[RMDB]
RNA sequence: GGGAACGACUCGAGUAGAGUCGAAAAAUGCUAGACAUGACUAGACACGCUAGUCAUGUGCUCUAGUGAUCCGAUCGAUCCGUCAUACGUGCUAGGAUCCAUGGUACAUCGGUACAGUACAUGGUACGGACGGUGGGUAUUUCGAUACCCACCGUCCAAAAGAAACAACAACAACAAC
Reactivity to DMS in 0.01 (KOAc 150mM, MgCl2 10mM, bicine 150mM(pH8.5), 24C), signal-to-noise 1, nucleotides 027 to 126: a030u020g020c010u000a020g000a040c000a000u000g000a020c060u000a000g010a300c230a280c300g070c000u010a000g020u030c000a010u000g020u000g010c260u010c000u000a050g030u000g000a060u000c020c000g030a020u000c060g020a070u000c000c000g020u000c100a000u000a100c130g000u000g000c070u000a230g060g000a020u000c000c020a060u000g000g000u000a010c020a070u000c100g000g010u010a040c190a150g060u040a150c070a000u000g000g050u000a090c100
Reactivity to 2A3 in 0.01 (KOAc 150mM, MgCl2 10mM, bicine 150mM(pH8.5), 24C), signal-to-noise 1, nucleotides 027 to 126: a000u160g000c000u010a010g000a030c000a000u020g020a000c000u000a010g060a080c070a050c240g210c020u010a000g030u000c000a000u000g000u000g000c010u010c000u030a000g030u000g110a040u060c010c050g000a120u020c020g020a010u060c000c040g130u040c050a080u080a170c160g030u120g010c040u040a090g000g040a020u000c030c020a100u120g020g020u040a040c030a090u070c120g180g050u080a030c000a030g000u040a060c000a010u120g040g040u050a090c110
An RNA of 177 nucleotides, treated with DMS and 2A3 and read out base by base. 2A3 adducts were read by reverse transcription with SuperScript II with manganese. Conditions: 150 mM KOAc, 10 mM MgCl2 and 150 mM bicine (pH 8.5), 24 C. It was measured as part of the RMDB library OK2TRN. For DMS the reverse transcriptase was MarathonRT.